[RMDB]
RNA sequence: GGGAACGACUCGAGUAGAGUCGAAAAGAUAUGGAUAGCUCCAUUGGGAGAUCAACGAUCGGAAACGAUCGUUCGAUCGAAGAACAAUGGAGGCUAUCCUAAGUCAAAAGACUUCCUUCGGGAAGUCGAUAGUUCCCCUGUUCGCAGGGGAACUAUCAAAAGAAACAACAACAACAAC
Reactivity to 2A3 in 0.01 (KOAc 150mM, MgCl2 10mM, bicine 150mM(pH8.5), 24C), signal-to-noise 2, nucleotides 027 to 126: g030a040u100a060u140g000g000a010u000a010g010c000u010c010c020a000u000u020g030g030g000a090g030a020u000c010a000a020c010g010a010u010c010g020g000a080a040a050c020g000a020u000c000g010u020u040c060g020a000u010c020g090a180a020g030a030a020c000a010a000u010g010g000a070g030g050c000u000a000u000c000c000u000a090a020g050u010c040a140a050a070a080g020a010c000u000u020c010c000u010u040c220g160g000g010a000a000g010u000c000
Reactivity to DMS in 0.01 (KOAc 150mM, MgCl2 10mM, bicine 150mM(pH8.5), 24C), signal-to-noise 3, nucleotides 027 to 126: g000a070u020a300u000g000g000a000u000a000g020c000u000c010c000a010u000u000g000g030g000a140g010a020u000c000a020a020c000g020a020u010c000g000g000a170a180a150c000g000a000u000c000g020u000u010c150g000a000u000c010g000a110a190g010a130a220c010a010a000u000g000g000a000g000g010c020u000a010u000c000c010u010a020a080g000u010c070a080a090a120a190g000a010c010u000u000c000c000u010u000c230g020g000g000a000a000g010u000c020